[RMDB]
Structure probing data (DMS and 2A3) for a 177-nucleotide construct. Values cover nucleotides 27 to 126. For 2A3, 10,481 sequencing reads were counted. For DMS the reverse transcriptase was MarathonRT.
RNA sequence: GGGAACGACUCGAGUAGAGUCGAAAACCCUGGUUAUUCGUAACCAGGGGUUGAGUCAAUCCUCUCAGUGCAUCGGUGGAUCACACGAAACGCAUGGACGACAAUUACGGUUAUUCGUAACCGUAAACAAUCCUGCAUUUUUCGAAAUGCAGGAUUGAAAAGAAACAACAACAACAAC
Reactivity to DMS in 0.01 (KOAc 150mM, MgCl2 10mM, bicine 150mM(pH8.5), 24C), signal-to-noise 6, nucleotides 027 to 126: c000c000c000u000g010g000u000u000a010u000u010c210g010u000a000a000c000c000a010g020g000g010g010u010u010g000a040g010u010c040a090a300u010c010c010u000c200u010c040a060g000u000g000c040a050u000c020g020g010u000g000g010a140u000c180a060c040a040c020g000a020a060a090c070g000c010a010u000g010g000a070c070g000a040c090a070a140u000u000a010c000g000g000u000u000a020u000u010c190g020u000a010a010c000c000g010u000a000a030a180
Reactivity to 2A3 in 0.01 (KOAc 150mM, MgCl2 10mM, bicine 150mM(pH8.5), 24C), signal-to-noise 5, nucleotides 027 to 126: c010c000c000u000g000g010u010u020a040u030u080c250g030u020a010a000c000c000a000g040g000g000g000u060u220g010a020g010u040c030a010a070u000c010c010u030c010u000c040a040g020u010g040c010a030u020c050g160g020u080g070g130a160u200c040a040c010a010c110g050a050a060a020c040g020c030a030u030g030g030a020c060g010a030c050a060a090u060u000a010c010g000g010u000u020a020u020u060c070g020u010a010a000c000c010g000u000a000a000a020